[RMDB]
RNA sequence: GGGAACGACUCGAGUAGAGUCGAAAAAACCACUUUGCCUACUAAUAUAGCUUUUGAACUCUAUGCUAAGCGUGCUGUACGCUCGCAUCCCGAUUUCAAAUUGCUACACAAUUUACAAGCAGACAUUAACCGUUCCGGUUCGCCGGAACGAAAAGAAACAACAACAACAAC
Reactivity to DMS in 0.01 (KOAc 150mM, MgCl2 10mM, bicine 150mM(pH8.5), 24C), signal-to-noise 5, nucleotides 027 to 129: a050a100c040c010a070c150u020u040u030g030c010c010u000a000c280u040a090a050u050a100u010a050g000c000u000u000u000u000g040a000a000c030u010c020u020a000u020g010c030u030a040a050g010c000g050u010g000c240u100g060u000a040c040g020c020u000c300g010c020a020u020c090c070c090g020a050u010u000u040c000a030a010a040u000u000g000c020u050a040c290a000c200a140a090u050u040u080a040c140a090a040g030c060a030g020a070c160a090u040u030a090a090c120
Reactivity to 2A3 in 0.01 (KOAc 150mM, MgCl2 10mM, bicine 150mM(pH8.5), 24C), signal-to-noise 9, nucleotides 027 to 129: a000a030c010c000a040c010u100u060u060g020c010c010u080a070c020u070a140a060u120a030u010a080g000c000u000u000u000u010g000a000a000c000u000c010u020a010u000g000c000u040a040a040g000c000g040u040g110c130u210g110u130a010c010g000c000u030c010g010c010a020u020c040c040c050g010a000u000u000u000c000a010a020a050u080u070g000c000u040a020c030a000c010a080a120u090u090u160a040c040a040a010g000c000a000g050a080c040a060u120u080a080a030c020